[RMDB]
RNA sequence: GGGAACGACUCGAGUAGAGUCGAAAAGGGGGCGUAAAGGUUUCGACGUGGGUUUGGAACUUGAGGCUGCAUGUCGUGUUACUCUGGGUCACGUAAAAACUGGGGAACUUUAAAAUAAACGCAGACGAUAAUUUCGCGAUAGCAGCCUAGUUGCUGCACUUCGAUCUCUCUUCGGAGAGAUCGAAGUAAAAGAAACAACAACAACAAC
Reactivity to 2A3 in 0.01 (KOAc 150mM, MgCl2 10mM, bicine 150mM(pH8.5), 24C), signal-to-noise 1, nucleotides 027 to 156: g020g030g000g010g000c010g090u030a030a000a030g100g050u020u050u100c060g020a050c010g010u000g050g090g000u010u110u110g100g000a030a030c000u010u020g030a010g010g010c010u030g000c000a130u040g030u000c010g010u000g010u000u060a020c010u020c000u000g000g080g000u060c010a000c040g030u030a000a010a020a080a020c010u010g000g000g000g060a000a050c060u010u110u150a160a120a080a050u130a060a090a000c050g020c080a130g020a050c040g070a040u090a170a240u160u210u210c030g000c020g050a070u030a030g000c030a000g030c080c000u000a000g000u000u140g000c000u020g010c050
The data come from the RNA Mapping Database (RMDB), library RSTRND. Chemical mapping of a 207-nucleotide RNA with 2A3. The reactions ran in a buffer of 150 mM KOAc, 10 mM MgCl2 and 150 mM bicine (pH 8.5), at 24 C.